Structure probing data (DMS and 2A3) for a 177-nucleotide construct. The DMS profile rests on 4,888 reads. The 2A3 profile rests on 1,641 reads. It was measured as part of the RMDB library OK2TST. 2A3 adducts were read by reverse transcription with SuperScript II with manganese. Conditions: 150 mM KOAc, 10 mM MgCl2 and 150 mM bicine (pH 8.5), 24 C. Reactivities are given for positions 27 through 126.
[RMDB]
RNA sequence: GGGAACGACUCGAGUAGAGUCGAAAAAUAGAGAUUUGGUCAGCAGAAACGCCUUUACCUUGCAGAUACAUUUUCACUGCGUUUGCACGACGCUCGCCCAACGCGAUGUUGUAUUCUGGCGUACCGCACAUGCGAAUAGGUUCGCCUAUUCGCAUGUAAAAGAAACAACAACAACAAC
Reactivity to DMS in 0.01 (KOAc 150mM, MgCl2 10mM, bicine 150mM(pH8.5), 24C), signal-to-noise 5, nucleotides 027 to 126: a110u010a090g000a090g010a110u000u000u000g010g000u010c080a110g010c050a060g020a070a110a050c090g010c040c030u000u000u000a070c100c050u010u010g010c030a040g000a090u000a060c090a060u000u010u020u000c110a120c130u010g010c030g000u000u000u000g010c080a060c110g000a080c080g010c060u000c080g010c020c040c060a070a080c120g000c070g000a050u010g010u010u000g020u000a080u010u010c050u000g000g010c010g020u000a070c120c060g010c130
Reactivity to 2A3 in 0.01 (KOAc 150mM, MgCl2 10mM, bicine 150mM(pH8.5), 24C), signal-to-noise 2, nucleotides 027 to 126: a000u130a020g100a030g020a040u130u100u180g060g030u060c070a020g010c010a030g150a080a120a030c050g040c010c000u070u070u030a100c040c020u010u070g000c020a020g020a080u090a140c030a140u070u100u040u130c100a090c030u010g030c020g000u000u060u060g040c070a060c060g090a020c010g020c020u050c010g050c000c000c000a020a020c070g040c030g040a090u070g030u220u040g050u070a300u090u070c020u020g030g050c010g020u050a090c020c110g050c010